[RMDB]
RNA sequence: GGGAACGACUCGAGUAGAGUCGAAAAGCGCACGACGAUACAUACUUUCUUUCAAACUUUACUUACUUUCUUUCUUUCCAAUGACUUCCAUUGAAGCACUUACGAACAAACUCACGUACGCAAAGCGCCAAAAGGCAUUUGCGUGGGCGAAAUACUAUCGAGUUGAAUCGUUCGCGAUUCAACUCGAAAAAGAAACAACAACAACAAC
Reactivity to 2A3 in 0.01 (KOAc 150mM, MgCl2 10mM, bicine 150mM(pH8.5), 24C), signal-to-noise 2, nucleotides 027 to 156: g010c020g010c020a000c060g040a000c000g010a030u070a130c030a030u070a040c020u000u080u000c000u040u080u040c050a090a120a040c000u090u060u100a130c050u070u020a050c010u070u040u000c000u010u020u010c000u000u070u000c020c000a040a080u100g050a170c000u080u000c070c010a200u080u180g090a020a000g060c050a020c060u090u130a030c180g050a150a010c040a100a100a050c050u020c040a050c030g190u070a020c000g000c020a000a020a000g090c090g010c120c000a000a300a070a160g000g000c000a000u000u000u010g000c020g000u010g000g080g000c010g030a120a010a000u170a090c100u060a050
Structure probing data (2A3) for a 207-nucleotide construct.
It was measured as part of the RMDB library OK3TST.
Reactivities are given for positions 27 through 156.
The reactions ran in a buffer of 150 mM KOAc, 10 mM MgCl2 and 150 mM bicine (pH 8.5), at 24 C.